[RMDB]
RNA sequence: GGGAACGACUCGAGUAGAGUCGAAAAUCUAGGGUUCCGCAUGUCAAUUGACAUGGACUGGUCCGAGAGAAAACACAUACGCGUAAAUAGGAGCGCGUAUGCACACGGAGGGAAAAAAGCCCGGGAGAAUGGGAUUAUUAGUUCGCUAAUAAUCCAAGACUCAAAAGAGGUUCGCCUCUUUUGAGUCAAAAGAAACAACAACAACAAC
Reactivity to 2A3 in 0.01 (KOAc 150mM, MgCl2 10mM, bicine 150mM(pH8.5), 24C), signal-to-noise 2, nucleotides 027 to 156: u020c000u010a010g000g000g000u000u020c000c000g000c000a000u020g010u000c020a180a300u240u300g000a000c000a000u010g030g040a070c020u090g010g000u020c000c000g000a000g000a000g000a000a080a010a000c020a030c010a010u050a000c000g000c010g030u120a050a210a130u210a290g080g040a200g040c000g000c000g000u000a010u010g020c000a000c010a000c040g000g050a020g030g010g000a010a300a000a000a140a000g000c000c010c050g080g130g010a040g010a070a050u290g060g000g010a000u000u000a000u000u010a010g010u050u010c170g010c150u020a010a010u000a000a000u000c000c000a000a020
The record gives the reactivity of an RNA of 207 nucleotides to 2A3. The data come from the RNA Mapping Database (RMDB), library M2RFPK. 2A3 adducts were read by reverse transcription with SuperScript II with manganese. The reactions ran in a buffer of 150 mM KOAc, 10 mM MgCl2 and 150 mM bicine (pH 8.5), at 24 C.